[RMDB]
RNA sequence: GGGAACGACUCGAGUAGAGUCGAAAAGCCUAACAGUUCGCUGUUAGGCAAAUGCACAGACUUCGCAACUGUGAAAUACACAACAGAAGUGUCUAUGCGAGGAUCGUUGCGUCUUCGGACGCAACAACAAGGUAGCGGAGUUCGCUCCGCUACCUUGAAAAGAAACAACAACAACAAC
Reactivity to 2A3 in 0.01 (KOAc 150mM, MgCl2 10mM, bicine 150mM(pH8.5), 24C), signal-to-noise 1, nucleotides 027 to 126: g020c010c000u030a000a010c010a000g050u100u130c180g010c100u000g000u000u010a000g000g000c010a030a020a010u160g000c010a000c010a000g070a010c020u000u010c040g000c050a010a060c030u010g000u010g010a040a020a000u270a000c050a000c000a060a160c060a090g080a140a040g160u050g050u000c050u110a070u050g000c020g010a020g050g020a100u140c140g000u000u010g000c000g000u000c000u000u030c090g110g000a000c030g000c020a000a000c000a000a010
Reactivity to DMS in 0.01 (KOAc 150mM, MgCl2 10mM, bicine 150mM(pH8.5), 24C), signal-to-noise 1, nucleotides 027 to 126: g000c000c000u010a000a000c000a010g060u000u010c170g040c050u020g000u010u010a010g000g010c000a000a010a020u000g000c030a060c050a000g010a060c040u010u010c010g050c130a060a200c190u010g030u000g010a070a080a090u000a120c060a030c030a010a050c100a060g000a100a070g010u000g000u000c030u000a060u030g000c000g000a060g010g010a060u000c150g030u010u000g010c000g000u000c040u000u000c270g010g000a040c000g010c000a000a000c010a000a200